[RMDB]
RNA sequence: GGGAACGACUCGAGUAGAGUCGAAAAGAUAUGGAUCCCACAGGGAGCUGAUCGGAAACGAUACCAGCGAAGAACUGUGUGGAUCCUAAGUCAAACCUCACGAGGCAGUUCGCUGCCUCGUGAGGAAGACAUUCUGAACGUUCGCGUUCAGAAUGUCAAAAGAAACAACAACAACAAC
Reactivity to DMS in 0.01 (KOAc 150mM, MgCl2 10mM, bicine 150mM(pH8.5), 24C), signal-to-noise 1, nucleotides 027 to 126: g000a070u030a300u000g000g000a020u000c000c000c010a020c010a020g000g000g000a110g070c010u010g010a080u000c000g030g010a090a080a240c000g020a010u000a110c270c030a000g010c000g000a110a160g010a100a210c000u010g010u000g010u000g030g000a010u010c000c000u000a000a040g000u000c030a090a170a140c000c000u000c000a000c000g030a010g010g030c000a010g030u000u000c290g000c000u000g010c000c000u000c000g000u000g010a000g000g000a010a000
Reactivity to 2A3 in 0.01 (KOAc 150mM, MgCl2 10mM, bicine 150mM(pH8.5), 24C), signal-to-noise 1, nucleotides 027 to 126: g010a010u040a030u180g010g020a010u030c010c000c000a010c000a010g030g040g000a030g010c000u010g000a010u000c000g040g040a080a020a030c010g040a020u150a300c180c030a020g010c000g040a090a000g050a040a020c030u020g010u030g030u300g110g000a000u000c010c000u010a010a000g010u020c010a020a000a170c000c000u000c010a010c020g010a010g000g000c020a000g040u120u180c210g100c200u030g020c020c000u000c010g000u010g010a000g000g000a000a000